[RMDB]
RNA sequence: GGGAACGACUCGAGUAGAGUCGAAAAAACGUAAUUCAGUGCCUCAUCCCAGGAAACAGGUUCGAGUUUGCCGCCACGCUGGCGACGGAUCAUGGGGGUUUUCAGGCGCGGGGUCAGGAUCUGGGUAUCACUACUAGUCAUUCGUGACUAGUAGUGAAAAAGAAACAACAACAACAAC
Reactivity to DMS in 0.01 (KOAc 150mM, MgCl2 10mM, bicine 150mM(pH8.5), 24C), signal-to-noise 5, nucleotides 027 to 126: a030a040c130g010u010a090a070u000u000c070a060g030u010g020c010c010u010c140a100u000c040c000c010a160g010g010a080a060a080c140a070g020g010u000u000c050g000a130g020u000u000u010g010c040c010g020c040c040a090c200g010c140u000g010g010c010g010a050c040g000g000a040u010c040a070u010g010g010g010g000g010u010u000u000u000c080a080g010g010c070g030c080g010g010g020g010u000c090a050g000g000a080u010c030u000g010g010g010u010a140
Reactivity to 2A3 in 0.01 (KOAc 150mM, MgCl2 10mM, bicine 150mM(pH8.5), 24C), signal-to-noise 2, nucleotides 027 to 126: a000a000c090g040u070a040a030u120u050c030a040g030u030g120c000c010u020c030a050u030c010c020c000a000g070g040a050a070a020c040a050g020g070u060u050c030g030a090g070u010u070u110g080c010c000g010c040c020a090c060g100c100u080g020g000c010g020a020c010g000g000a010u040c030a070u100g040g050g040g000g000u070u000u040u060c070a040g060g000c020g000c020g060g030g000g020u040c010a010g000g060a010u020c030u060g060g000g000u070a030